[RMDB]
RNA sequence: GGGAACGACUCGAGUAGAGUCGAAAAACGCCGGAGCAGGCGCGUAUCGCGGAGGAUGCAGGAGCUGCGGCGGUGAUGGCGCUCGAGAGGGUGCCUGCAGAUAUCCGCGCCCACGGUGGGGUGGCGCAGCUCACAUGCAGUUCGCUGCAUGUGAGCUAAAAGAAACAACAACAACAAC
Reactivity to 2A3 in 0.01 (KOAc 150mM, MgCl2 10mM, bicine 150mM(pH8.5), 24C), signal-to-noise 1, nucleotides 027 to 126: a000c060g040c010c010g030g040a080g060c060a050g180g070c050g030c030g080u050a040u210c050g000c090g120g090a020g090g000a040u050g000c010a000g100g050a020g030c020u170g090c000g030g020c010g000g030u050g020a070u110g050g030c010g000c020u040c010g100a150g020a040g000g010g050u000g010c020c010u010g010c020a000g000a110u130a050u070c020c030g000c030g000c030c020c000a100c050g100g110u200g040g020g040g010u040g040g000c010g000c060
Reactivity to DMS in 0.01 (KOAc 150mM, MgCl2 10mM, bicine 150mM(pH8.5), 24C), signal-to-noise 2, nucleotides 027 to 126: a110c020g020c040c010g020g030a100g020c090a090g010g020c090g000c040g060u000a050u000c080g010c080g000g010a100g020g000a130u010g000c050a060g000g000a170g010c010u000g020c020g000g010c010g010g020u010g010a090u010g010g000c000g030c020u000c030g000a190g020a160g020g010g000u010g010c030c010u000g010c110a080g000a210u030a130u010c030c030g000c020g000c020c010c030a130c100g010g030u010g000g000g000g040u000g010g000c050g040c060
This 177-nucleotide RNA was probed chemically with 2A3 and DMS. High 2A3 reactivity points to a flexible backbone, as in loops and unpaired stretches. The data come from the RNA Mapping Database (RMDB), library OK2TST. Conditions: 150 mM KOAc, 10 mM MgCl2 and 150 mM bicine (pH 8.5), 24 C. For DMS, 1,504 sequencing reads were counted. Values are in units of 0.01, from 0 to 300, in steps of 10.